[RMDB]
RNA sequence: GGGAACGACUCGAGUAGAGUCGAAAACACCCGCAAUUCGUUGCGGGUGAGAGCACCACUCCUGCGGCAGUUAAGGCCAUACGGACAGCCGGGUGCAAAGCCAUAGCAGGUCCUUCGGGACCUGCAAUUCUAUGACAAAAUUCGUUUUGUCAUAGAAAAAAGAAACAACAACAACAAC
Reactivity to DMS in 0.01 (KOAc 150mM, MgCl2 10mM, bicine 150mM(pH8.5), 24C), signal-to-noise 3, nucleotides 027 to 126: c010a010c000c000c000g010c000a000a030u000u000c150g020u000u010g000c010g020g000g030u000g000a030g000a140g010c010a030c010c010a180c070u000c010c000u000g020c230g010g050c010a090g010u010u010a120a170g020g010c010c020a050u010a300c220g020g010a040c170a070g010c110c110g010g000g010u000g000c030a090a070a090g000c070c090a090u000a080g010c000a020g000g000u000c000c020u000u010c140g030g010g010a020c010c020u000g000c010a000a010
Reactivity to 2A3 in 0.01 (KOAc 150mM, MgCl2 10mM, bicine 150mM(pH8.5), 24C), signal-to-noise 2, nucleotides 027 to 126: c000a000c000c010c010g000c000a030a030u080u060c140g060u080u020g000c010g020g000g000u010g000a020g000a000g020c000a000c010c000a020c020u020c010c000u030g000c030g020g000c000a110g020u230u300a170a060g140g000c020c000a090u220a120c030g000g020a000c000a010g100c100c070g170g010g000u000g000c020a080a020a010g030c030c020a100u160a010g010c010a000g020g030u020c000c000u060u180c240g040g000g020a000c000c000u000g000c020a000a000
Chemical mapping of a 177-nucleotide RNA with DMS and 2A3.
The DMS profile rests on 2,775 reads.
Values cover nucleotides 27 to 126.
The reactions ran in a buffer of 150 mM KOAc, 10 mM MgCl2 and 150 mM bicine (pH 8.5), at 24 C.